RNA sequence: GGGAACGACUCGAGUAGAGUCGAAAAUCUUUCUAAUGGCAAUGCCGAUGGGCUCGGAAGCGUUAGAGAAAAAGAGUUGGUCGUCGCUGCUUCUAAGUACCAAAUUGAUAAAACCAAUGUUCAUGUAAUCAGCAGUGAGUUUCGACUCACUGCUGAUAAAAGAAACAACAACAACAAC
Reactivity to DMS in 0.01 (KOAc 150mM, MgCl2 10mM, bicine 150mM(pH8.5), 24C), signal-to-noise 1, nucleotides 027 to 126: u000c030u020u000u000c040u010a010a060u010g040g000c110a110a060u020g040c020c010g000a090u000g000g050g020c090u010c060g020g000a220a100g030c010g000u020u010a060g010a150g000a030a130a060a130a170g020a060g010u000u000g000g020u000c030g030u000c020g040c010u000g000c040u000u000c060u010a060a120g130u000a100c030c020a030a130a020u000u030g000a080u010a100a040a150a200c130c090a050a080u010g000u000u000c120a080u000g020u000a050